[RMDB]
RNA sequence: GGGAACGACUCGAGUAGAGUCGAAAAAUGGGAGAUUUGUAAAUGCUUCCUUCUCUGGCAUUGCUGUCCUAACUGCCUUUUCAGAAGGCUUUGCUGAUGACCUACAUUGAGGAACAUUCAAAAUGAUCAUUAACUCAGCACUUACAAGCAUGAAGCACACGAACAGAUGGUUCGCCAUCUGUUCGUGAAAAGAAACAACAACAACAAC
Reactivity to 2A3 in 0.01 (KOAc 150mM, MgCl2 10mM, bicine 150mM(pH8.5), 24C), signal-to-noise 2, nucleotides 027 to 156: a010u100g020g010g010a020g030a070u120u170u050g220u300a130a110a050u170g050c000u010u040c000c000u060u040c030u000c000u020g070g010c060a030u010u090g000c030u040g050u170c030c040u040a070a100c110u090g020c090c000u040u010u090u170c120a120g030a090a030g040g060c140u080u030u150g010c020u010g030a050u060g010a080c000c000u080a060c050a130u070u100g020a020g100g050a150a120c060a050u070u290c110a050a040a060a090u050g020a060u080c030a020u020u080a030a040c090u020c060a000g030c020a020c000u050u140a020c030a060a050g030c050a040u090g070a030a050g090c060a000